[RMDB]
RNA sequence: GGGAACGACUCGAGUAGAGUCGAAAAAUCACCGGUGGGGAACCCCAUACGGCAACGGCGUAGAAGUAAAUGCUAACCAAUCCGUGGUAUCUACGCGACGGAGCAUCCACGGCUAACUCUAACAAGGCUAAGCGUCUCGGUUUCGACCGAGACGCAACGCUCUAGAUUGAUUCGUCAAUCUAGAGCGAAAAGAAACAACAACAACAAC
Reactivity to 2A3 in 0.01 (KOAc 150mM, MgCl2 10mM, bicine 150mM(pH8.5), 24C), signal-to-noise 1, nucleotides 027 to 156: a000u050c020a030c010c010g000g000u040g000g010g000g140a130a120c100c000c000c000a020u150a150c040g010g020c030a140a040c020g000g000c000g000u000a010g010a020a000g010u000a000a000a000u030g000c000u030a040a060c030c040a030a050u010c000c010g010u000g010g010u000a000u000c000u000a010c000g000c000g010a020c180g030g030a000g010c000a000u000c000c020a010c000g010g000c000u050a040a020c010u050c000u150a060a060c060a110a000g060g000c040u050a110a020g000c030g060u050c000u020c000g000g200u090u150u120c220g060a070c000c030g000a020g090a000c000g000c000a000a010
An RNA of 207 nucleotides, treated with 2A3 and read out base by base. The data come from the RNA Mapping Database (RMDB), library M2RFPK. For 2A3 the reverse transcriptase was SuperScript II with manganese. The RNA was probed in 150 mM KOAc, 10 mM MgCl2 and 150 mM bicine (pH 8.5) at 24 C.